[RMDB]
RNA sequence: GGGAACGACUCGAGUAGAGUCGAAAAGACAAUGUUUGACUAGUUUUAAUUGCGCAGAAAGUAAUUUGCUUUAUCCAACUAUGAAAACAGGUAAAAAUAGGGAAUUUAUGAUGUUACUUAUGGAGACGUACAUAUGGAACUUCGGUUCCAUAUGUACAAAAGAAACAACAACAACAAC
Reactivity to 2A3 in 0.01 (KOAc 150mM, MgCl2 10mM, bicine 150mM(pH8.5), 24C), signal-to-noise 6, nucleotides 027 to 126: g060a000c060a030a150u080g060u020u000u060g040a050c000u010a020g040u010u030u040u120a150a080u130u120g040c090g010c070a030g140a140a120a010g100u110a060a170u060u050u140g040c040u090u040u090a050u040c030c010a020a050c000u020a000u080g070a000a010a040a000c050a010g030g110u200a030a050a010a050a030u140a060g030g000g060a040a040u060u100u050a100u200g130a040u090g050u070u010a040c010u030u070a040u140g070g030a110g010a060c090
Reactivity to DMS in 0.01 (KOAc 150mM, MgCl2 10mM, bicine 150mM(pH8.5), 24C), signal-to-noise 4, nucleotides 027 to 126: g030a090c110a090a100u000g010u010u010u000g010a300c240u000a020g000u000u000u040u020a020a160u040u010g000c170g020c100a070g040a040a130a130g010u050a020a060u010u000u010g000c030u000u000u000a040u000c210c270a040a030c040u000a030u000g000a070a020a010a020c010a040g000g000u000a020a010a040a040a050u030a040g010g000g000a040a040u000u000u030a080u010g000a040u020g030u010u000a010c040u010u030a080u030g020g000a090g010a110c160